An RNA of 177 nucleotides, treated with 2A3 and DMS and read out base by base. The data come from the RNA Mapping Database (RMDB), library RFM100. 2A3 adducts were read by reverse transcription with SuperScript II with manganese. The 2A3 profile rests on 899 reads. Conditions: 150 mM KOAc, 10 mM MgCl2 and 150 mM bicine (pH 8.5), 24 C.
RNA sequence: GGGAACGACUCGAGUAGAGUCGAAAAGAAAGAAACGGAGCUCCUGAUGCUCGCCGGGGAAAGCCAGCGGUGCUGCCACCGCACUCCUUAAGUGGAUCGGCCCCCGGGAGUUUCAGGAGCUCCGUAAGGAUUCUCAUGUAUUCGUACAUGAGAAUCCAAAAGAAACAACAACAACAAC
Reactivity to 2A3 in 0.01 (KOAc 150mM, MgCl2 10mM, bicine 150mM(pH8.5), 24C), signal-to-noise 1, nucleotides 027 to 126: g050a000a120a000g070a040a090a000c040g000g000a020g010c000u000c000c010u000g010a000u010g020c000u000c000g200c070c020g000g000g040g020a020a170a030g000c020c010a010g010c030g010g010u020g020c170u200g150c180c000a000c010c000g030c030a080c040u080c020c000u230u040a160a200g260u160g120g000a050u070c060g000g020c000c050c000c020c000g000g000g000a000g000u000u000u040c010a000g000g000a000g000c000u010c000c000g000u000a010a000
Reactivity to DMS in 0.01 (KOAc 150mM, MgCl2 10mM, bicine 150mM(pH8.5), 24C), signal-to-noise 2, nucleotides 027 to 126: g030a040a090a090g000a090a120a030c000g000g000a030g000c000u000c000c020u010g000a000u010g030c010u000c010g040c030c000g000g000g000g000a100a040a240g010c000c000a210g030c020g000g020u000g000c190u030g000c180c000a030c020c000g030c020a080c170u010c020c010u000u000a090a100g000u000g000g000a040u090c160g000g020c040c010c020c020c040g000g000g000a000g010u000u000u010c000a030g010g010a000g000c020u000c010c000g010u020a010a050